[RMDB]
RNA sequence: GGGAACGACUCGAGUAGAGUCGAAAACUACAUGUUGUAUGAUUCCAACUGUAAGAUAUUCUAGAUAAGGCAAAACUAUAGAUCUAGACGGUGGUUGCCCAGGGCUGAGGAGUGAGGGAAGGAGGAAUAUAUAACCUUGGUUCGCCAAGGUUAUAUAAAAAGAAACAACAACAACAAC
Reactivity to 2A3 in 0.01 (KOAc 150mM, MgCl2 10mM, bicine 150mM(pH8.5), 24C), signal-to-noise 2, nucleotides 027 to 126: c040u060a040c010a120u200g020u080u020g080u100a180u180g080a170u190u050c050c000a040a000c040u020g000u080a070a000g040a140u160a090u160u070c010u020a020g020a050u050a030a140g110g010c050a060a020a020a020c030u010a070u070a300g040a070u030c010u020a010g000a050c020g000g040u060g020g040u070u080g010c010c020c000a010g010g030g000c040u020g030a000g050g010a050g030u060g040a060g000g040g000a040a040g040g010a060g040g010a070a000
Reactivity to DMS in 0.01 (KOAc 150mM, MgCl2 10mM, bicine 150mM(pH8.5), 24C), signal-to-noise 7, nucleotides 027 to 126: c080u000a050c070a040u010g020u000u000g010u000a090u010g020a190u010u010c140c010a020a050c020u000g010u000a060a090g010a110u010a070u010u000c010u010a010g010a030u010a100a080g010g000c090a060a060a080a200c070u000a130u010a090g010a030u000c020u000a040g010a050c200g010g020u000g000g010u000u010g010c030c010c030a060g010g000g010c120u010g000a080g010g000a100g020u010g000a110g000g000g010a050a080g000g010a090g010g010a050a060
Chemical mapping of a 177-nucleotide RNA with 2A3 and DMS. The reactions ran in a buffer of 150 mM KOAc, 10 mM MgCl2 and 150 mM bicine (pH 8.5), at 24 C. The DMS profile rests on 9,602 reads.